[RMDB]
RNA sequence: GGGAACGACUCGAGUAGAGUCGAAAAGAUAUGGAGGAGAACUACAACGUAAAGACCACGAAGAACUUACUUCGGAAACGAAGUAAGGGAGUGGUUGAUGAAGUUGCUCCUCCUAAGUCAAAACCGUAGGUUAUUGGUUCGCCAAUAACCUACGGAAUCUUAGCUGAGUCUUCGGACUCAGCUAAGAAAAAGAAACAACAACAACAAC
Reactivity to 2A3 in 0.01 (KOAc 150mM, MgCl2 10mM, bicine 150mM(pH8.5), 24C), signal-to-noise 1, nucleotides 027 to 156: g000a000u020a000u050g000g010a020g000g080a010g000a070a010c070u190a070c300a080a010c000g040u100a040a040a030g000a000c000c000a000c040g180a300a030g030a010a020c000u000u000a000c000u000u000c000g040g000a050a000a020c000g000a000a000g000u000a000a000g050g000g010a030g000u010g010g020u010u010g000a030u300g020a030a020g000u020u020g050c000u000c000c000u000c000c000u000a000a000g020u000c010a020a020a050a120c000c010g000u000a000g000g000u000u010a010u010u000g030g040u020u190c300g080c060c020a000a000u000a000a000c000c000u000a000c000g000g000a000a010
The data come from the RNA Mapping Database (RMDB), library RNAMAK. Structure probing data (2A3) for a 207-nucleotide construct. The 2A3 profile rests on 907 reads. Conditions: 150 mM KOAc, 10 mM MgCl2 and 150 mM bicine (pH 8.5), 24 C.